The record gives the reactivity of an RNA of 177 nucleotides to 2A3. The RNA was probed in 150 mM KOAc, 10 mM MgCl2 and 150 mM bicine (pH 8.5) at 24 C. Values cover nucleotides 27 to 126. Reactivities are rounded to 0.1 and cut off at 0 and 3.

[RMDB]
RNA sequence: GGGAACGACUCGAGUAGAGUCGAAAACAAACAAACACAGCCACAAACCAAAGAAAUGGUAAGAAAAGUGGCUGAAACCUUCAAAAAUAUGAAUGAAGGAGGGCCAUUCAUACAAACAAAAACAAAACUAGUGCAUUCACUUCGGUGAAUGCACUAGAAAAGAAACAACAACAACAAC
Reactivity to 2A3 in 0.01 (KOAc 150mM, MgCl2 10mM, bicine 150mM(pH8.5), 24C), signal-to-noise 1, nucleotides 027 to 126: c060a030a070a000c060a040a050a010c010a000c000a070g070c040c030a070c000a000a130a000c000c000a020a020a020g170a180a080a300u050g000g000u140a100a000g210a050a150a040a010g070u000g000g000c030u000g000a000a000a000c000c000u080u160c160a140a130a000a020a020u150a010u030g000a020a000u000g060a080a000g080g000a000g000g000g030c000c000a000u010u020c000a000u000a020c020a000a120a000c010a160a030a140a000a000c110a030a070a000a000